The record gives the reactivity of an RNA of 177 nucleotides to 2A3 and DMS. 2A3 adducts were read by reverse transcription with SuperScript II with manganese. For DMS the reverse transcriptase was MarathonRT.
RNA sequence: GGGAACGACUCGAGUAGAGUCGAAAAAUCCGGCGACGAUAAGAACUGAUCAGGGCCCGGAAUUUACCUGCCGCGCGCUCGAUCAAUGGGCCUUUGAGCAUGGCGUGGAACUGCGACUUAUCCAGCCACCAACCUUAUUAUUCGUAAUAAGGUUGGUAAAAGAAACAACAACAACAAC
Reactivity to 2A3 in 0.01 (KOAc 150mM, MgCl2 10mM, bicine 150mM(pH8.5), 24C), signal-to-noise 7, nucleotides 027 to 126: a000u030c020c010g000g010c010g020a090c010g010a010u010a040a050g060a160a080c060u080g010a060u060c020a060g010g010g020c010c010c020g040g020a060a030u120u120u090a110c010c020u030g050c020c010g080c010g000c010g010c040u030c040g050a100u070c050a060a090u130g030g010g000c000c000u080u090u140g040a040g010c050a050u110g040g000c060g020u090g040g040a090a050c040u080g020c010g010a030c020u010u010a010u030c010c010a020g030c010c000
Reactivity to DMS in 0.01 (KOAc 150mM, MgCl2 10mM, bicine 150mM(pH8.5), 24C), signal-to-noise 9, nucleotides 027 to 126: a100u000c010c010g020g010c010g000a130c220g000a050u000a040a050g010a210a150c120u000g000a050u010c010a060g010g010g010c030c010c000g010g010a080a050u010u000u000a120c110c080u010g020c010c020g010c150g010c130g020c010u000c040g000a060u000c110a060a100u010g010g010g010c020c020u000u000u010g010a080g010c050a070u010g020g010c020g020u000g010g000a080a110c070u010g010c050g000a180c030u000u000a050u000c010c080a250g000c040c050